[RMDB]
Conditions: 150 mM KOAc, 10 mM MgCl2 and 150 mM bicine (pH 8.5), 24 C. Structure probing data (DMS and 2A3) for a 177-nucleotide construct. It was measured as part of the RMDB library 15KREP. For DMS the reverse transcriptase was MarathonRT. The DMS profile rests on 1,216 reads.

RNA sequence: GGGAACGACUCGAGUAGAGUCGAAAAUUUCUUACAGUUGACGGUGUGCAAUAUUAUUGCUACACGUCUAAGGACACUUUAGAUGAUAUCUUACAACAGGCUAAUAAGUCUGUUGGUAUUAUAUCUAUCCAAAAGAGUACUUCGGUACUCUUUUGGAAAAAGAAACAACAACAACAAC
Reactivity to DMS in 0.01 (KOAc 150mM, MgCl2 10mM, bicine 150mM(pH8.5), 24C), signal-to-noise 1, nucleotides 027 to 126: u010u000u000c020u010u000a120c130a090g000u020u000g000a010c020g040g030u020g050u000g000c000a010a010u000a160u000u010a120u000u000g000c000u010a000c000a050c000g010u000c010u010a070a070g000g000a140c300a050c120u000u010u010a090g000a110u000g010a030u000a000u000c000u000u000a010c000a020a000c000a010g000g000c000u000a120a120u000a090a070g050u000c000u000g010u000u000g000g010u000a000u000u000a010u000a000u000c000u010a130
Reactivity to 2A3 in 0.01 (KOAc 150mM, MgCl2 10mM, bicine 150mM(pH8.5), 24C), signal-to-noise 1, nucleotides 027 to 126: u000u010u030c000u020u150a060c030a100g030u110u040g060a050c030g110g050u030g010u000g030c010a010a010u060a090u300u120a070u090u120g000c010u060a010c010a000c000g000u000c010u000a050a020g040g030a010c010a010c140u110u100u110a060g000a050u120g000a010u030a000u000c010u000u000a000c000a010a000c040a010g000g020c000u010a160a060u170a300a000g030u010c010u000g000u010u010g040g000u000a000u020u000a000u010a000u000c010u050a010